RNA sequence: GGGAACGACUCGAGUAGAGUCGAAAAGCCGUCAAAUUUGGUUCUCGACCCGCUGUCACCAAUUACGCUGCUUUUUCCUUUUUAUUAACUCCUAUACUUGUGUACGCCCAAAGCCAGAUUGUUUUGGCCUUAGCAUACACUUCGGUGUAUGCUAAGGAAAAGAAACAACAACAACAAC
Reactivity to DMS in 0.01 (KOAc 150mM, MgCl2 10mM, bicine 150mM(pH8.5), 24C), signal-to-noise 1, nucleotides 027 to 126: g010c020c000g010u000c090a050a070a070u000u000u000g010g020u000u000c090u010c060g000a070c050c040c060g010c040u020g000u000c040a060c040c020a000a070u000u000a080c140g040c040u000g010c060u000u000u000u000u000c010c010u000u000u000u000u000a060u030u010a070a150c040u000c030c120u010a170u020a080c090u000u010g010u000g010u010a060c100g020c000c030c020a060a070a110g000c060c080a030g020a070u010u000g020u000u000u000u000g010g000
Reactivity to 2A3 in 0.01 (KOAc 150mM, MgCl2 10mM, bicine 150mM(pH8.5), 24C), signal-to-noise 2, nucleotides 027 to 126: g050c030c010g000u100c070a100a210a260u110u100u090g010g000u050u010c030u020c060g120a140c020c040c060g000c060u120g060u060c020a010c030c000a070a030u130u080a040c100g010c040u050g000c020u110u020u000u110u050c000c000u160u040u000u080u050a240u060u090a060a040c010u010c010c000u080a090u050a190c020u070u000g030u000g000u050a040c000g040c000c000c000a020a030a010g050c020c010a060g030a270u110u070g070u050u010u010u000g010g000
Chemical mapping of a 177-nucleotide RNA with DMS and 2A3. The DMS profile rests on 1,055 reads. Reactivities are given for positions 27 through 126. Source: RMDB library RFMREP, as collected in RNAgym. For 2A3 the reverse transcriptase was SuperScript II with manganese.